This 207-nucleotide RNA was probed chemically with 2A3 and DMS. The reactions ran in a buffer of 150 mM KOAc, 10 mM MgCl2 and 150 mM bicine (pH 8.5), at 24 C. DMS adducts were read by reverse transcription with MarathonRT. Values cover nucleotides 27 to 156. For DMS, 2,126 sequencing reads were counted.

[RMDB]
RNA sequence: GGGAACGACUCGAGUAGAGUCGAAAACCACGUGAGCUGCCGCCCACGCUGCUGGGGAACAGUUCCGAAGAGGAGAGCCAGCUGGAGACUAACGUGACGUACUGGGAGGAGGAGCAGGAGUUUGAGGUGGUGAGCACACUGCGUCUGCAGCACGUGGCAAACGUAACGGAUUCGUCCGUUACGUUUGAAAAGAAACAACAACAACAAC
Reactivity to 2A3 in 0.01 (KOAc 150mM, MgCl2 10mM, bicine 150mM(pH8.5), 24C), signal-to-noise 4, nucleotides 027 to 156: c010c010a000c020g050u060g040a030g020c010u010g020c000c100g050c010c020c000a030c030g070c030u060g000c020u010g000g020g000g010a080a050c010a050g020u090u030c010c010g030a070a040g030a030g060g020a030g010a010g010c020c020a030g010c030u050g030g030a080g010a040c020u090a110a020c070g110u090g080a010c020g020u100a030c050u050g020g020g030a020g000g010a010g020g010a010g030c020a010g000g070a090g020u050u070u160g100a100g000g030u000g010g010u060g090a020g000c040a030c010a010c060u040g010c010g110u090c100u160g000c000a000g000c000a010c020g030u020g000g010
Reactivity to DMS in 0.01 (KOAc 150mM, MgCl2 10mM, bicine 150mM(pH8.5), 24C), signal-to-noise 1, nucleotides 027 to 156: c000c010a070c080g070u000g010a100g000c000u000g000c070c070g010c020c000c020a040c140g040c070u000g020c030u000g010g010g030g020a080a090c030a050g000u000u000c020c030g000a090a080g000a190g010g010a090g040a090g030c040c040a090g000c030u000g040g020a150g020a070c070u000a010a050c100g010u000g010a220c050g040u000a100c100u010g030g050g010a190g000g000a070g030g000a090g010c010a110g000g010a080g000u000u000u000g000a080g010g000u000g010g020u010g010a110g050c030a090c060a010c000u000g070c020g010u000c110u000g050c010a020g020c030a030c060g000u000g080g000